[RMDB]
RNA sequence: GGGAACGACUCGAGUAGAGUCGAAAAAUUUGAGUCCUAUGGUAUUUUCUGUAGUCAUAGGAGAAGUAAAGUGCUGAUAAAGGAAGAUGGUUUUUACUGUGAAUAUAGACUAGCCGCAGGUGGGAAGAGCUGUAAGAUGUUUCGACAUCUUACAGCUAAAAGAAACAACAACAACAAC
Reactivity to 2A3 in 0.01 (KOAc 150mM, MgCl2 10mM, bicine 150mM(pH8.5), 24C), signal-to-noise 2, nucleotides 027 to 126: a000u120u090u220g060a040g080u020c020c000u030a040u040g020g030u120a280u140u220u020u010c040u070g090u060a040g050u050c010a000u000a010g020g030a010g010a000a000g030u090a030a080a070g020u040g070c060u100g030a090u170a120a140a030g080g020a020a080g020a080u090g080g000u000u020u010u060u030a090c030u000g000u010g120a070a020u070a010u000a080g020a050c050u000a040g010c030c020g000c020a020g000g020u040g020g050g030a070a020g030
Reactivity to DMS in 0.01 (KOAc 150mM, MgCl2 10mM, bicine 150mM(pH8.5), 24C), signal-to-noise 2, nucleotides 027 to 126: a100u000u010u000g010a180g010u010c010c000u000a030u000g010g000u000a050u010u010u010u000c090u000g000u000a040g000u000c000a020u000a010g020g010a060g010a060a070g010u000a050a080a110g030u000g020c030u000g000a140u020a050a120a070g000g020a070a060g010a070u000g020g010u010u000u000u000u000a090c090u010g010u010g000a070a040u010a060u000a080g010a060c070u000a070g010c040c010g030c080a040g000g030u010g000g000g000a090a070g000
Chemical mapping of a 177-nucleotide RNA with 2A3 and DMS. The reactions ran in a buffer of 150 mM KOAc, 10 mM MgCl2 and 150 mM bicine (pH 8.5), at 24 C. For 2A3, 1,182 sequencing reads were counted.